[RMDB]
RNA sequence: GGGAACGACUCGAGUAGAGUCGAAAACUAGAUCUCUAACAACACUAAACUACAUACAAAUAACACAGAUAACUUUCCGUUGACAUAGGACUAAUAGGAUUUUAGUUCCAGAAAAAUCACUGUUUUUCCGAAGUUCAUUAUGAAUCCCAAUGUGUCAUAUCGGAUGCAUAUUCGUAUGCAUCCGAUAAAAAGAAACAACAACAACAAC
Reactivity to DMS in 0.01 (KOAc 150mM, MgCl2 10mM, bicine 150mM(pH8.5), 24C), signal-to-noise 2, nucleotides 027 to 156: c050u010a070g060a110u010c030u000c010u000a090a110c070a110a050c050a160c020u010a060a070a200c030u000a090c010a110u010a230c060a040a100a130u000a060a050c040a100c030a060g010a090u010a040a090c050u000u000u000c030c040g030u000u000g020a020c040a090u010a120g000g050a010c040u000a020a090u000a080g010g010a090u000u000u000u000a030g000u000u000c090c150a140g000a000a000a020a060a020u000c090a140c150u010g010u000u000u000u000u000c010c000g010a130a160g000u000u000c070a070u000u020a040u010g020a090a030u000c010c010c010a070a180u010g030u000g000u000c010a110
Reactivity to 2A3 in 0.01 (KOAc 150mM, MgCl2 10mM, bicine 150mM(pH8.5), 24C), signal-to-noise 4, nucleotides 027 to 156: c040u040a060g040a210u020c020u000c030u160a080a020c080a090a030c050a060c070u190a090a180a040c070u130a050c070a110u200a050c060a040a130a070u180a170a040c060a020c030a060g060a170u130a210a060c030u030u070u030c050c050g090u050u040g010a000c010a070u090a020g040g000a000c010u020a020a020u010a010g000g050a040u000u010u040u020a100g060u110u110c030c020a030g200a020a060a000a000a010u090c070a090c190u020g040u040u010u010u000u010c000c010g030a050a020g030u040u020c010a020u040u140a070u170g090a030a020u020c010c000c020a040a030u120g030u020g020u050c010a010